Description:
This 207-nucleotide RNA was probed chemically with 2A3 and DMS. Source: RMDB library OK3TST, as collected in RNAgym.
[RMDB]
RNA sequence: GGGAACGACUCGAGUAGAGUCGAAAAAGAGACCCUGAGCCUACAGCAAGGCUGUGGUGGGUCGGAUGGUCUUUGGAUGUGUCAGCUUAGCUAGGCCACAGUCACCAGUAAUUCAAUCAGACACUAAUCUAGGUAUUUCUGUGAAGGUAUUUUGUAGUCCAGUUUAUCUAUUCGUAGAUAAACUGGAAAAAGAAACAACAACAACAAC
Reactivity to 2A3 in 0.01 (KOAc 150mM, MgCl2 10mM, bicine 150mM(pH8.5), 24C), signal-to-noise 3, nucleotides 027 to 156: a000g070a010g000a000c000c000c000u010g050a030g050c000c030u060a040c050a050g080c030a160a140g160g000c020u000g010u050g020g060u060g000g020g000u030c030g000g030a080u100g010g020u020c030u070u070u080g100g010a070u030g050u010g020u100c020a020g020c040u090u090a020g000c030u050a030g020g040c010c020a020c010a030g060u040c020a040c060c000a040g040u090a050a060u140u100c080a020a110u070c020a020g070a050c010a020c090u060a090a070u030c030u030a040g000g060u060a100u060u100u010c040u040g030u020g080a040a030g000g010u080a070u130u170u120u150g070u080a060g030
Reactivity to DMS in 0.01 (KOAc 150mM, MgCl2 10mM, bicine 150mM(pH8.5), 24C), signal-to-noise 4, nucleotides 027 to 156: a110g000a160g020a040c000c010c000u000g000a080g020c020c010u000a110c050a240g010c130a200a090g010g010c030u010g030u010g020g030u010g010g020g010u010c020g000g020a090u000g000g020u000c040u000u000u000g020g020a100u000g020u000g040u000c010a120g020c050u000u000a130g020c030u000a050g020g020c020c030a050c030a090g000u000c040a070c010c010a100g010u000a080a120u000u010c070a060a150u010c060a130g010a060c080a100c040u010a060a070u000c100u000a100g020g020u010a050u000u000u000c030u000g010u000g010a090a100g020g010u000a050u000u000u000u000g020u000a090g020

In probing experiments dimethyl sulfate is read out at A N1 and C N3, which are open when not base-paired. Values cover nucleotides 27 to 156. Conditions: 150 mM KOAc, 10 mM MgCl2 and 150 mM bicine (pH 8.5), 24 C. 2A3 adducts were read by reverse transcription with SuperScript II with manganese.